RNA sequence: GGGAACGACUCGAGUAGAGUCGAAAAACUGGAGAUAGAGGAGGGCACCAGUCCAGUCAUCAAGAUCAUCUCCGGAAGGAUCCAUAUGCUAAUCUAAUGUUGCAGCGGGAGAAGGAUUGGGUCUCUAUCAGGCAUUAAAUUUCGAUUUAAUGCCUGAAAAAGAAACAACAACAACAAC
Reactivity to DMS in 0.01 (KOAc 150mM, MgCl2 10mM, bicine 150mM(pH8.5), 24C), signal-to-noise 4, nucleotides 027 to 126: a080c040u000g010g000a050g000a060u000a200g010a090g010g010a070g020g000g020c040a080c100c060a080g000u000c040c080a120g010u000c050a060u000c060a030a070g010a110u010c050a060u000c030u000c010c020g010g020a080a060g000g000a050u000c020c020a050u010a040u000g010c040u010a050a100u010c090u010a060a100u000g000u000u000g000c060a050g000c090g010g000g000a080g000a100a080g000g000a060u000u000g010g020g000u000c010u000c040u010a230
Reactivity to 2A3 in 0.01 (KOAc 150mM, MgCl2 10mM, bicine 150mM(pH8.5), 24C), signal-to-noise 1, nucleotides 027 to 126: a020c000u030g040g000a060g020a050u130a140g050a050g070g020a040g090g000g000c080a100c040c030a090g070u080c060c030a030g090u070c010a050u020c000a050a050g040a070u050c020a000u000c060u030c050c020g000g050a040a030g090g030a040u020c030c000a010u050a080u250g020c060u060a100a080u060c010u020a220a060u190g020u090u080g100c030a030g000c060g010g010g040a070g020a080a000g000g000a000u020u060g010g000g040u010c010u000c010u030a070

The data come from the RNA Mapping Database (RMDB), library OK2TST. An RNA of 177 nucleotides, treated with DMS and 2A3 and read out base by base. DMS adducts were read by reverse transcription with MarathonRT. The RNA was probed in 150 mM KOAc, 10 mM MgCl2 and 150 mM bicine (pH 8.5) at 24 C.